Record summary:
Structure probing data (DMS and 2A3) for a 177-nucleotide construct. The reactions ran in a buffer of 150 mM KOAc, 10 mM MgCl2 and 150 mM bicine (pH 8.5), at 24 C.
[RMDB]
RNA sequence: GGGAACGACUCGAGUAGAGUCGAAAAAUGGAAACGUUAGCUGUUGCGUUUGACCCGGUUGUAACGUAGCGAGUGGUGAGGUAGAGAAUGGGUUACCCUGUGCGGUAGCGUAUAUCGUGACUGGGUAUCAUCUGGCUUAUUUCGAUAAGCCAGAUGAAAAAGAAACAACAACAACAAC
Reactivity to DMS in 0.01 (KOAc 150mM, MgCl2 10mM, bicine 150mM(pH8.5), 24C), signal-to-noise 4, nucleotides 027 to 126: a080u010g010g000a120a040a040c040g020u000u000a100g020c050u000g030u000u000g010c060g000u000u000u000g000a130c040c020c020g010g020u000u010g010u000a060a090c120g010u000a070g000c080g010a090g020u000g010g010u000g010a070g000g010u010a060g000a080g010a060a060u000g000g010g000u010u000a030c000c000c010u000g000u000g010c020g000g020u000a020g000c300g010u010a070u000a010u000c020g010u000g010a080c020u000g010g000g020u000a090
Reactivity to 2A3 in 0.01 (KOAc 150mM, MgCl2 10mM, bicine 150mM(pH8.5), 24C), signal-to-noise 1, nucleotides 027 to 126: a000u240g020g030a040a030a050c050g030u040u030a050g000c030u020g040u090u040g010c030g000u030u050u090g050a050c000c000c010g020g020u040u060g110u040a030a020c070g010u000a010g020c010g060a040g050u050g000g050u080g010a040g050g000u060a040g010a010g060a090a130u110g000g000g070u000u020a020c000c000c010u030g030u040g050c020g000g000u000a020g010c020g080u170a040u000a020u140c010g000u000g100a070c020u050g010g010g010u010a020

High DMS reactivity at an A or C suggests that its Watson-Crick edge is free. Reactivities are given for positions 27 through 126.